[RMDB]
RNA sequence: GGGAACGACUCGAGUAGAGUCGAAAAAGAGCCAUAAUUAGAGCAAACUAAUUGAAGUUGUGUUUUGACACACUUUCCAAAUUCACGGGUGCUGCAUGACAUAUUCACAACACUACUGCCGCACAGCGGCGAAAGGUAAGUUCGCUUACCUUUCGCCAAAAGAAACAACAACAACAAC
Reactivity to 2A3 in 0.01 (KOAc 150mM, MgCl2 10mM, bicine 150mM(pH8.5), 24C), signal-to-noise 9, nucleotides 027 to 126: a000g120a010g050c030c010a070u100a100a050u080u050a020g030a030g140c090a100a050a120c030u050a030a070u060u090g050a080a020g040u130u100g010u030g030u030u100u080u280g140a010c010a000c000a010c030u030u050u020c040c020a060a100a140u160u090c070a040c100g100g010g000u040g010c020u020g010c020a040u090g040a070c030a050u160a090u120u140c060a040c020a170a060c020a040c060u150a030c030u050g010c000c000g010c020a030c020a060g040c040
Reactivity to DMS in 0.01 (KOAc 150mM, MgCl2 10mM, bicine 150mM(pH8.5), 24C), signal-to-noise 9, nucleotides 027 to 126: a050g010a130g010c040c040a120u020a030a020u000u000a020g000a150g010c190a100a100a140c030u010a030a030u010u000g000a050a100g010u010u010g030u000g000u010u010u030u010g010a090c050a020c040a030c040u000u000u000c030c060a040a070a100u010u020c100a080c110g000g000g000u000g010c030u000g010c030a040u010g010a070c200a070u010a070u010u010c130a070c130a040a050c120a040c070u010a090c100u000g000c020c040g000c040a030c080a060g020c150
An RNA of 177 nucleotides, treated with 2A3 and DMS and read out base by base. The reactions ran in a buffer of 150 mM KOAc, 10 mM MgCl2 and 150 mM bicine (pH 8.5), at 24 C. Source: RMDB libraries RFM100 and RFMREP, as collected in RNAgym. DMS adducts were read by reverse transcription with MarathonRT. Values cover nucleotides 27 to 126.